The record gives the reactivity of an RNA of 177 nucleotides to DMS and 2A3.
The 2A3 profile rests on 2,526 reads.
RNA sequence: GGGAACGACUCGAGUAGAGUCGAAAACGACAUCGAGGGUCUUCGAGCCCAAGUCAUGUCGGGCGCCGGUGAUCUCGACGACCUCGGUCGGUGCCGAGACCAUCGCCGCGGCGGAACGCACCUGGGCGCUUUCUUUCGGUUUCGACCGAAAGAAAGCAAAAGAAACAACAACAACAAC
Reactivity to DMS in 0.01 (KOAc 150mM, MgCl2 10mM, bicine 150mM(pH8.5), 24C), signal-to-noise 2, nucleotides 027 to 126: c060g000a000c050a050u000c030g010a300g000g100g040u030c060u000u000c300g020a100g020c010c000c000a000a270g020u020c120a060u000g060u030c000g000g000g020c020g020c210c040g020g020u010g000a060u000c070u000c040g040a100c000g000a070c060c000u020c180g020g000u010c030g000g010u000g030c100c000g000a030g000a030c140c000a070u000c000g040c260c000g000c040g000g020c070g020g000a160a110c040g000c080a050c020c030u000g020g000g030c190
Reactivity to 2A3 in 0.01 (KOAc 150mM, MgCl2 10mM, bicine 150mM(pH8.5), 24C), signal-to-noise 3, nucleotides 027 to 126: c010g010a010c030a010u020c030g020a070g000g010g040u010c020u110u130c210g070a090g030c000c000c020a010a000g080u090c060a010u030g040u000c000g010g030g010c010g020c020c010g020g010u030g040a070u000c020u010c020g050a050c010g030a040c000c010u040c200g040g010u050c030g020g030u060g160c050c010g010a000g000a000c010c030a000u020c000g040c050c010g000c000g050g050c020g030g080a070a030c060g010c030a030c000c010u000g000g020g010c030